Chemical mapping of a 177-nucleotide RNA with DMS and 2A3. The RNA was probed in 150 mM KOAc, 10 mM MgCl2 and 150 mM bicine (pH 8.5) at 24 C.
[RMDB]
RNA sequence: GGGAACGACUCGAGUAGAGUCGAAAAGAUAUGGAGAUCCUCCCCACCGAGUCGGUGGCUUCUUCGGAAACGAAAUAGCCACGAUUCGAGGGAUCUCCUAAGUCAAACGGUGCGUUCGCGCACCGAAGUCUAUAUUAUUGUUCGCAAUAAUAUAGACAAAAGAAACAACAACAACAAC
Reactivity to DMS in 0.01 (KOAc 150mM, MgCl2 10mM, bicine 150mM(pH8.5), 24C), signal-to-noise 6, nucleotides 027 to 126: g000a110u020a210u010g010g010a010g010a000u000c000c000u000c130c030c020c060a300c100c000g000a010g010u000c000g030g030u000g010g000c000u000u000c130u000u000c000g010g010a110a070a130c000g010a000a020a070u000a020g010c000c000a010c000g010a010u000u000c000g010a140g010g010g000a000u000c000u000c000c000u000a010a080g000u010c090a110a110a200c020g000g010u000g010c000g020u000u010c210g020c010g010c000a020c000c010g010a010a050
Reactivity to 2A3 in 0.01 (KOAc 150mM, MgCl2 10mM, bicine 150mM(pH8.5), 24C), signal-to-noise 2, nucleotides 027 to 126: g050a080u220a190u290g000g000a010g010a000u000c000c000u050c050c030c010c010a020c010c000g000a010g020u020c200g110g270u060g020g000c000u030u020c020u070u000c020g030g030a060a070a050c000g010a000a020a030u070a030g000c000c000a010c000g000a000u000u010c000g000a010g010g000g000a000u000c000u000c000c000u010a050a020g130u100c150a120a070a100c020g000g000u010g020c000g020u060u110c300g000c000g000c190a000c000c000g010a020a010
Record summary: 2A3 adducts were read by reverse transcription with SuperScript II with manganese.